This 207-nucleotide RNA was probed chemically with 2A3 and DMS. The 2A3 profile rests on 2,778 reads. The data come from the RNA Mapping Database (RMDB), library OK3TST. For DMS the reverse transcriptase was MarathonRT.

RNA sequence: GGGAACGACUCGAGUAGAGUCGAAAAGCAGUUUCACUCACUGAAGACUCUGAGCGCAGAGUGUCAGUCGUGCUACCACAUGCACGUGAUCAGAGUAUGUGUGAACUCUGACUGACGACACAAUCGCUUGUGUCCUUUAUAAUGAAACUGGUGAGUCGUGACUGAUUAGCUUCGGCUAAUCAGUCACAAAAGAAACAACAACAACAAC
Reactivity to 2A3 in 0.01 (KOAc 150mM, MgCl2 10mM, bicine 150mM(pH8.5), 24C), signal-to-noise 4, nucleotides 027 to 156: g080c020a010g000u000u010u010c000a010c000u030c010a100c040u020g020a000a000g010a010c000u030c010u030g030a040g180c080g010c070a000g030a000g020u000g000u010c010a000g000u010c000g020u010g000c010u090a130c040c060a060c000a080u050g010c010a020c110g060u090g090a110u120c060a020g020a010g060u020a070u080g140u040g040u060g100a030a020c010u000c040u080g000a020c010u000g000a010c010g010a000c000a010c000a010a140u300c060g010c110u010u000g000u000g000u010c000c000u010u040u020a160u030a070a040u040g020a010a010a010c010u000g090g060u100g040a060g120u130c140
Reactivity to DMS in 0.01 (KOAc 150mM, MgCl2 10mM, bicine 150mM(pH8.5), 24C), signal-to-noise 1, nucleotides 027 to 156: g050c020a000g000u020u000u030c000a030c020u020c050a150c120u000g040a060a020g010a040c020u010c000u000g020a300g080c090g030c090a010g010a150g050u010g020u040c000a030g060u010c010g010u010g000c040u000a290c040c120a070c130a050u000g000c040a100c090g000u000g040a050u000c060a090g000a120g000u000a000u000g010u000g050u000g020a090a090c000u020c010u010g020a050c060u000g040a060c010g000a070c000a020c000a050a080u010c160g010c120u030u010g010u000g000u000c010c020u000u030u000a030u000a050a090u000g000a020a010a010c020u000g010g010u000g010a120g020u000c030